[RMDB]
RNA sequence: GGGAACGACUCGAGUAGAGUCGAAAAGAUAUGGAAUGGAACUACAAGCGAACUCGCAUCGAUCAUCUAAUUAAAUCGGAAACGAUUUAAUUAGAUGGGAGCGAGGGAGCUUGCCAUUCCUAAGUCAGCCUUAAAGUAACUUCGGUUACUUUAAGGCAAAAGAAACAACAACAACAAC
Reactivity to 2A3 in 0.01 (KOAc 150mM, MgCl2 10mM, bicine 150mM(pH8.5), 24C), signal-to-noise 2, nucleotides 027 to 126: g030a030u100a030u190g010g030a020a020u000g010g020a120a110c180u280a050c300a020a000g010c000g000a010a020c000u020c010g030c020a300u270c110g110a120u260c010a010u000c010u000a000a000u020u010a010a010a000u000c000g040g040a070a050a070c010g030a000u000u000u000a000a000u000u010a000g000a010u000g000g070g020a000g000c010g010a020g000g000g000a020g000c020u000u010g000c020c020a000u010u030c000c010u010a050a010g020u010c040a020
Reactivity to DMS in 0.01 (KOAc 150mM, MgCl2 10mM, bicine 150mM(pH8.5), 24C), signal-to-noise 2, nucleotides 027 to 126: g000a100u000a300u000g000g000a060a000u000g000g010a160a000c080u020a300c000a000a020g000c000g020a300a300c000u000c000g000c000a300u000c140g000a080u020c000a030u000c000u000a000a000u000u000a000a000a010u000c010g000g000a100a090a110c000g020a010u000u000u000a000a000u000u000a000g000a000u000g020g020g010a020g000c020g010a030g020g000g000a300g010c000u000u000g020c000c000a000u000u000c000c000u000a020a040g040u000c020a180